[RMDB]
RNA sequence: GGGAACGACUCGAGUAGAGUCGAAAAUUGUGGCAUGAUGUGUGAACACUGAGUGAGCUAACACAUGGAAUAUCUCCACCCAGUACAUAAUAGUGCCUAUGAAGUCACCGGGUGCCCUUGUCCUCCCCACUCGCUCCUGGGCUAACCACUUAUACUGCUGAAUCGUGCUAUUCGUAGCACGAUUCAGAAAAGAAACAACAACAACAAC
Reactivity to 2A3 in 0.01 (KOAc 150mM, MgCl2 10mM, bicine 150mM(pH8.5), 24C), signal-to-noise 1, nucleotides 027 to 156: u010u020g060u030g000g010c050a030u030g010a030u080g020u010g010u000g110a060a000c070a010c070u030g010a010g050u010g010a070g050c100u190a150a010c000a010c010a120u110g030g060a070a020u150a160u130c040u000c060c000a000c010c000c000a030g010u090a010c060a090u080a160a020u040a300g010u020g000c010c000u080a110u140g110a140a000g040u050c030a000c010c010g020g010g020u050g000c000c000c110u050u070g040u140c010c000u000c030c030c000c000a040c000u040c000g000c000u000c000c000u030g040g060g000c000u020a050a120c030c020a040c000u030u000a010u000a100c030u080g170